[RMDB]
RNA sequence: GGGAACGACUCGAGUAGAGUCGAAAACUGAUUACGGUUCAUGAAAACGUCAAUCAGGACGAAGCCAAGCGCCUUCUUCAUUCGCAUCGUAUCGAAAAACUGCUUGUCGUGGACGAUAAGGGCCGUACAGGUACUGGUCGUUCGCGACCAGUACCUGAAAAGAAACAACAACAACAAC
Reactivity to 2A3 in 0.01 (KOAc 150mM, MgCl2 10mM, bicine 150mM(pH8.5), 24C), signal-to-noise 1, nucleotides 027 to 126: c000u010g040a040u100u050a000c000g030g020u040u180c040a030u280g100a040a100a000a000c010g000u000c020a000a050u020c000a030g010g020a030c050g040a040a010g070c000c060a090a010g070c020g030c060c020u030u050c050u000u000c050a010u070u000c000g080c090a020u020c080g090u170a070u110c040g090a040a010a070a060a040c020u030g040c000u020u040g010u000c010g010u020g010g030a010c020g040a040u010a140a130g120g040g000c050c000g000u060a100
Reactivity to DMS in 0.01 (KOAc 150mM, MgCl2 10mM, bicine 150mM(pH8.5), 24C), signal-to-noise 1, nucleotides 027 to 126: c000u000g020a020u000u000a000c020g000g060u000u000c080a170u010g000a120a000a070a030c010g000u000c170a000a050u000c000a010g020g000a160c130g000a070a080g020c110c050a050a130g050c100g000c120c050u000u000c040u000u000c050a150u010u000c050g030c000a020u030c020g000u000a160u020c040g020a050a020a080a050a050c180u000g000c110u000u000g010u000c030g040u020g000g000a120c000g000a020u000a070a050g020g000g000c010c010g010u010a100